Structure probing data (2A3 and DMS) for a 177-nucleotide construct. Values cover nucleotides 27 to 126. The 2A3 profile rests on 2,714 reads.
RNA sequence: GGGAACGACUCGAGUAGAGUCGAAAAAAAAGAUAUGGAGCCUACAAGAUGAGGCCCUGGAGCGUUGAAAGCUUCUCGGAAACGAGAAGCUGGAGCUCCCUGGCUUGAGUAGGCUCCUAAGUCAAAAGUUUACAAUCUAGUUCGCUAGAUUGUAAACAAAAGAAACAACAACAACAAC
Reactivity to 2A3 in 0.01 (KOAc 150mM, MgCl2 10mM, bicine 150mM(pH8.5), 24C), signal-to-noise 1, nucleotides 027 to 126: a020a040a040a040g050a020u080a040u100g000g000a010g010c000c010u030a030c020a140a130g160a300u300g250a090g110g020c020c010c020u030g020g010a010g000c000g130u300u010g030a010a000a000g000c010u000u000c020u040c020g000g000a010a010a020c000g000a000g010a010a040g000c010u000g000g010a000g010c000u020c000c000c000u010g000g020c030u090u020g020a070g050u010a010g000g000c010u010c020c000u000a000a000g000u010c000a100a000a190a000
Reactivity to DMS in 0.01 (KOAc 150mM, MgCl2 10mM, bicine 150mM(pH8.5), 24C), signal-to-noise 3, nucleotides 027 to 126: a080a050a110a090g000a010u000a090u000g000g000a020g030c000c000u000a010c000a090a160g010a270u010g000a070g010g000c000c000c040u000g010g000a020g020c000g000u000u010g010a150a130a040g010c000u000u000c000u000c010g000g000a030a010a040c000g000a030g000a020a010g000c000u000g000g000a040g000c000u000c000c000c020u010g000g020c010u010u010g020a300g000u000a010g010g010c010u000c000c010u000a000a050g000u000c000a090a110a090a120